[RMDB]
Annotation:
Structure probing data (DMS and 2A3) for a 177-nucleotide construct. Source: RMDB libraries RFM100 and RFMREP, as collected in RNAgym. The reactions ran in a buffer of 150 mM KOAc, 10 mM MgCl2 and 150 mM bicine (pH 8.5), at 24 C. Values cover nucleotides 27 to 126. For 2A3 the reverse transcriptase was SuperScript II with manganese.

RNA sequence: GGGAACGACUCGAGUAGAGUCGAAAAUGGAAACGAGGAACCACCGAGGCCACUCCUACAAGAGGAGAUCGAUAGACUCGGGGUGUACGCGCCAAGGCAACGAGGCGUUGAGCCCGCGAGCACUAAUUACUUUAGACUAGUUCGCUAGUCUAAAGUAAAAAGAAACAACAACAACAAC
Reactivity to DMS in 0.01 (KOAc 150mM, MgCl2 10mM, bicine 150mM(pH8.5), 24C), signal-to-noise 7, nucleotides 027 to 126: u020g020g010a060a070a040c060g010a170g000g010a090a110c060c020a080c050c010g020a100g020g020c050c060a100c050u000c020c010u000a100c250a140a140g010a040g000g020a030g000a080u030c090g000a050u000a040g000a300c020u000c000g000g010g010g000u000g000u010a190c230g000c030g000c010c010a010a300g000g000c240a050a110c020g010a300g010g000c000g010u010u020g010a260g010c000c010c000g010c000g000a020g030c060a100c020u010a020a100u010
Reactivity to 2A3 in 0.01 (KOAc 150mM, MgCl2 10mM, bicine 150mM(pH8.5), 24C), signal-to-noise 8, nucleotides 027 to 126: u130g020g030a060a050a030c050g020a070g050g040a030a040c020c010a030c010c030g030a060g040g000c030c020a050c010u010c000c010u060a100c070a150a070g050a020g190g000a010g010a060u110c070g070a070u040a100g050a040c000u000c000g010g000g000g000u030g020u050a020c030g000c000g000c000c010a020a010g020g000c020a040a040c050g010a030g000g000c000g010u020u130g000a010g000c000c010c010g250c010g030a000g010c010a010c040u060a080a070u030